RNA sequence: GGGAACGACUCGAGUAGAGUCGAAAACAGGAUUGCGGAUUGAGUGCAGCGUAAUCCGACCGACGAGAGCACGGUGAGGAAGGAGCUCGGCAUUCUUCCAGUUCUCGAAGCCGAGAGGAGCACUCAAGGGUUCCAUGGAGUUCGCUCCAUGGAACCCAAAAGAAACAACAACAACAAC
Reactivity to 2A3 in 0.01 (KOAc 150mM, MgCl2 10mM, bicine 150mM(pH8.5), 24C), signal-to-noise 1, nucleotides 027 to 126: c000a030g000g000a010u010u000g000c000g300g060a160u120u010g000a010g000u010g000c030a000g060c020g000u040a000a000u000c000c000g010a020c000c000g140a110c000g160a070g110a020g150c270a000c000g000g010u110g060a020g060g120a020a020g070g000a010g030c000u010c000g000g000c000a160u010u040c000u020u000c010c000a080g050u080u020c000u010c090g000a050a000g000c010c000g000a030g010a040g090g020a070g000c000a000c000u000c000a000a020